[RMDB]
RNA sequence: GGGAACGACUCGAGUAGAGUCGAAAAGAAGCAGUCCUUAUUGUGUGUGAUGUUUAGUCAUCGCACUGUGCCUACGGGCUGCCAACGUAGGUCCAAUGUGCCGAGAGGCACUAGAAGUACGGCUUAUUAUGACGCAUCGCCGUACCAACGAUGCUGAACCUAAUAGCCUCUUCGGAGGCUAUUAGGUAAAAGAAACAACAACAACAAC
Reactivity to DMS in 0.01 (KOAc 150mM, MgCl2 10mM, bicine 150mM(pH8.5), 24C), signal-to-noise 2, nucleotides 027 to 156: g020a090a090g000c020a020g000u000c020c040u000u000a110u010u000g000u000g010u000g040u000g040a040u010g000u000u010u030a230g020u010c000a020u000c000g000c010a000c010u000g010u000g000c050c030u000a050c070g000g010g000c010u000g020c080c030a070a030c010g010u000a020g020g110u010c070c030a060a210u020g050u000g010c000c000g030a300g000a300g030g040c000a020c010u000a060g000a050a080g010u000a020c010g020g070c040u010u000a110u000u000a070u010g010a190c170g000c050a010u010c010g000c000c020g000u000a130c060c010a030a000c020g020a030u010g000c000u000g020a160
Reactivity to 2A3 in 0.01 (KOAc 150mM, MgCl2 10mM, bicine 150mM(pH8.5), 24C), signal-to-noise 3, nucleotides 027 to 156: g090a040a000g000c010a000g010u020c030c030u100u100a240u260u220g100u020g000u020g010u000g030a000u020g080u020u280u230a200g100u210c000a010u000c000g000c000a000c030u030g040u090g070c000c000u020a020c020g000g040g040c020u060g000c020c010a040a000c020g020u010a020g050g000u010c000c030a030a050u080g000u010g000c020c020g040a030g020a020g050g000c000a000c020u020a030g060a140a010g060u040a010c010g000g010c010u010u020a050u130u020a090u270g130a070c090g000c060a010u060c020g000c030c030g010u010a010c000c000a010a060c020g010a010u040g000c040u070g040a040
Chemical mapping of a 207-nucleotide RNA with DMS and 2A3. The DMS profile rests on 3,528 reads. The data come from the RNA Mapping Database (RMDB), library OK3TST. The 2A3 profile rests on 1,317 reads. The RNA was probed in 150 mM KOAc, 10 mM MgCl2 and 150 mM bicine (pH 8.5) at 24 C.